RNA sequence: GGGAACGACUCGAGUAGAGUCGAAAAUUGGUUUUUGGUUCCUAAAAGAGUUUGUAUUUGAGCCGAAUAGGAAAGAGAGUCCUGUCUGAGGGUGAACCUCUUUCCGAAAUUUUAUACACAGACUACACACGUAGAGGCUGAUCUGGGGCGCAAUAGGGAAUAUAGAGUUGUUCGCAACUCUAUAUUCAAAAGAAACAACAACAACAAC
Reactivity to 2A3 in 0.01 (KOAc 150mM, MgCl2 10mM, bicine 150mM(pH8.5), 24C), signal-to-noise 1, nucleotides 027 to 156: u050u000g050g030u100u020u020u000u190g030g010u010u010c010c000u110a080a050a130a000g110a020g010u010u140u170g030u080a090u090u110u160g050a020g030c020c010g020a090a090u080a090g000g000a000a000a000g010a000g000a010g030u010c000c010u060g120u220c130u100g070a110g000g040g000u040g040a020a010c000c000u000c050u010u010u000c000c000g000a010a000a000u000u000u000u040a010u030a040c050a000c020a000g020a000c000u080a080c120a000c000a010c120g000u010a040g040a040g100g000c030u020g030a030u000c050u050g010g010g050g000c050g030c090a010a090u050a230g060g010
Reactivity to DMS in 0.01 (KOAc 150mM, MgCl2 10mM, bicine 150mM(pH8.5), 24C), signal-to-noise 2, nucleotides 027 to 156: u000u000g000g020u010u000u000u000u010g030g000u000u000c000c030u000a070a080a110a140g010a180g010u000u000u010g000u000a060u000u000u010g000a050g020c040c020g000a060a110u000a170g010g010a050a020a040g010a060g010a100g000u000c010c000u010g020u000c150u010g000a190g000g000g010u000g000a030a040c010c000u000c010u000u000u000c010c000g000a030a040a080u020u020u010u010a090u000a060c010a120c040a070g020a060c030u000a060c070a090c080a070c090g000u000a090g010a100g010g020c010u000g000a020u000c010u010g010g050g020g020c030g010c030a050a060u000a130g030g030
Annotation:
This 207-nucleotide RNA was probed chemically with 2A3 and DMS. The 2A3 profile rests on 601 reads. For DMS, 3,430 sequencing reads were counted.